Source: RMDB library TTRINS, as collected in RNAgym.
This 177-nucleotide RNA was probed chemically with 2A3 and DMS.
The RNA was probed in 150 mM KOAc, 10 mM MgCl2 and 150 mM bicine (pH 8.5) at 24 C.
Reactivities are rounded to 0.1 and cut off at 0 and 3.
For DMS the reverse transcriptase was MarathonRT.
[RMDB]
RNA sequence: GGGAACGACUCGAGUAGAGUCGAAAAGAUAUGGAUCUGGAACUACCGUGUGCUUUAACUUGGACCGCAUAUCGAAUCGGAAACGAUUCGAUAUGCGCUAGUUAAUCACACGGCCAGAUCCUAAGUCGAUGUUUAUGAAGUUCGCUUCAUAAACAUCAAAAGAAACAACAACAACAAC
Reactivity to 2A3 in 0.01 (KOAc 150mM, MgCl2 10mM, bicine 150mM(pH8.5), 24C), signal-to-noise 5, nucleotides 027 to 126: g100a040u160a060u220g000g010a000u010c010u010g010g000a090a050c100u190a080c300c010g000u010g000u000g050c230u010u040u020a010a010c020u080u120g130g130a300c230c110g000c000a000u010a000u010c000g000a010a000u010c010g010g020a050a060a050c010g000a000u000u000c000g000a000u000a000u000g000c010g000c000u000a000g000u000u010a000a000u010c010a000c000a000c000g000g000c000c000a000g000a000u000c000c000u010a030a010g010u010c090
Reactivity to DMS in 0.01 (KOAc 150mM, MgCl2 10mM, bicine 150mM(pH8.5), 24C), signal-to-noise 6, nucleotides 027 to 126: g000a100u010a300u000g010g010a020u000c000u010g000g000a090a030c060u030a300c010c000g010u000g010u000g000c300u000u000u000a000a010c000u000u010g030g010a160c300c030g000c000a000u000a000u000c000g010a010a000u010c000g010g010a140a090a190c000g020a010u010u000c000g010a000u000a000u000g010c000g010c020u000a010g000u000u000a000a000u010c000a000c000a010c000g000g000c010c000a010g010a010u000c000c000u000a010a110g000u010c090